[RMDB]
RNA sequence: GGGAACGACUCGAGUAGAGUCGAAAACGUAUUCCUGAACAGAAUGGAAUUCGAAAUCCAAAACAGAACUACAUCUGAUAUACUGUAUCCAGAAUGCCAUUUGAAUUCUCCUAUAGUCAAAGGGAAACCUCCCCAUUAAGUUCGCUUAAUGGGGAGGAAAAGAAACAACAACAACAAC
Reactivity to DMS in 0.01 (KOAc 150mM, MgCl2 10mM, bicine 150mM(pH8.5), 24C), signal-to-noise 2, nucleotides 027 to 126: c110g010u020a050u030u010c000c010u000g010a100a020c070a260g010a090a020u000g000g010a050a010u010u010c090g000a110a170a080u000c030c060a080a090a200a050c020a040g000a020a020c140u000a120c270a080u000c010u000g000a050u010a030u010a200c130u000g010u020a050u000c050c070a220g010a010a010u010g070c040c050a030u010u000u010g000a110a240u050u000c000u000c010c050u010a020u000a030g010u000c140a070a130a140g010g010g010a130a120a150
Reactivity to 2A3 in 0.01 (KOAc 150mM, MgCl2 10mM, bicine 150mM(pH8.5), 24C), signal-to-noise 2, nucleotides 027 to 126: c030g050u000a070u050u060c000c000u010g030a090a030c020a040g080a130a030u040g010g000a040a020u080u020c000g050a040a000a020u070c010c010a000a150a020a000c060a060g050a070a100c080u270a030c180a120u020c010u040g090a020u010a000u040a270c090u040g000u040a030u040c000c010a020g000a040a030u010g010c020c010a010u090u040u030g070a090a100u080u060c030u050c000c000u150a130u110a210g110u060c060a100a110a140g030g020g000a010a040a060